[RMDB]
RNA sequence: GGGAACGACUCGAGUAGAGUCGAAAAGAAAGAAAGAGGCGCUUCAGGUGGCUCUGGGCCGAAAGUUCUGACGACAGACCAGAAGCGGGAGGCCGUAGAAGUCAUGUGUGAGACAACUGGUCUGUCGCAACGCCGUGCCUGCAGGCUGGCUGGUCAAAAUACCGUAAAUGUUCGCAUUUACGGUAUUAAAAGAAACAACAACAACAAC
Reactivity to 2A3 in 0.01 (KOAc 150mM, MgCl2 10mM, bicine 150mM(pH8.5), 24C), signal-to-noise 2, nucleotides 027 to 156: g010a020a040a000g040a050a080a080g030a040g040g010c050g000c100u060u080c040a070g040g090u040g020g030c000u030c040u080g000g010g020c050c010g030a080a060a020g060u110u030c070u080g020a050c030g000a010c010a000g000a010c000c000a020g010a060a020g050c030g010g000g010a080g050g050c060c040g000u010a060g030a130a020g030u050c070a060u040g060u040g020u030g070a100g010a040c070a070a010c090u000g010g010u020c000u000g000u010c000g000c000a030a020c010g000c020c010g020u040g010c000c010u080g070c050a050g020g000c030u010g000g000c020u020g060g000u010c020a180a000
Reactivity to DMS in 0.01 (KOAc 150mM, MgCl2 10mM, bicine 150mM(pH8.5), 24C), signal-to-noise 2, nucleotides 027 to 156: g010a160a100a060g010a090a080a140g010a120g020g040c070g040c050u010u000c060a080g040g030u010g010g000c020u000c040u000g000g000g000c010c020g000a110a080a100g010u000u000c010u010g010a130c010g020a040c020a010g000a030c020c010a030g000a100a220g010c030g030g000g020a100g020g030c010c020g040u010a100g010a110a080g000u010c020a080u010g020u000g030u010g000a160g000a030c020a030a230c000u000g000g000u010c010u000g000u010c070g010c030a040a050c060g000c030c020g000u010g040c000c020u000g010c070a030g010g000c030u000g000g010c030u010g020g000u010c070a060a130
This 207-nucleotide RNA was probed chemically with 2A3 and DMS. Reactivities are given for positions 27 through 156. DMS adducts were read by reverse transcription with MarathonRT. The RNA was probed in 150 mM KOAc, 10 mM MgCl2 and 150 mM bicine (pH 8.5) at 24 C. It was measured as part of the RMDB library OK3TST. For 2A3 the reverse transcriptase was SuperScript II with manganese. For DMS, 3,869 sequencing reads were counted.